[RMDB]
RNA sequence: GGGAACGACUCGAGUAGAGUCGAAAAUGGUGGAGAAAUCUGGUGAUGGAUUAAUCAUUACAGGUGAAGCUCAGGAUAUUAUUUCAAAUGCAGCAACUUUAUACGCACAGGAAAAUGCUCCUGAACUGCUGAAAAAACGAGCAACUCGUAAAGCUCGGAUUUAGUAAGCGUUCGCGCUUACUAAAUCAAAAGAAACAACAACAACAAC
Reactivity to DMS in 0.01 (KOAc 150mM, MgCl2 10mM, bicine 150mM(pH8.5), 24C), signal-to-noise 2, nucleotides 027 to 156: u000g020g010u020g020g000a100g010a040a070a060u000c020u000g020g040u000g020a030u010g040g030a300u000u000a100a050u000c010a030u000u000a090c050a000g050g080u000g020a110a070g050c030u000c000a110g020g040a110u010a010u000u000a120u010u020u000c010a040a110a160u000g040c030a080g020c060a090a090c160u010u000u000a120u000a120c160g010c060a020c050a090g020g000a040a050a180a130u000g020c180u010c020c020u000g000a060a070c070u020g000c020u010g000a000a050a050a050a070a150c000g000a030g060c010a070a100c070u000c120g020u000a040a090a170g000c010u000c010g030
Reactivity to 2A3 in 0.01 (KOAc 150mM, MgCl2 10mM, bicine 150mM(pH8.5), 24C), signal-to-noise 3, nucleotides 027 to 156: u100g020g000u080g020g050a060g030a050a120a040u040c040u030g020g020u030g060a050u040g000g020a050u070u230a190a050u100c030a010u030u170a060c030a030g060g000u040g030a050a000g010c020u020c050a010g000g040a010u030a020u180u060a080u020u130u080c080a110a080a030u130g020c020a010g020c010a030a070c020u090u200u150a150u070a090c080g030c010a010c000a010g000g070a020a110a080a090u120g040c030u020c010c000u000g010a040a050c040u030g020c010u030g000a060a070a030a010a030a000c000g000a000g010c000a020a130c070u060c100g130u070a090a060a020g000c010u000c000g010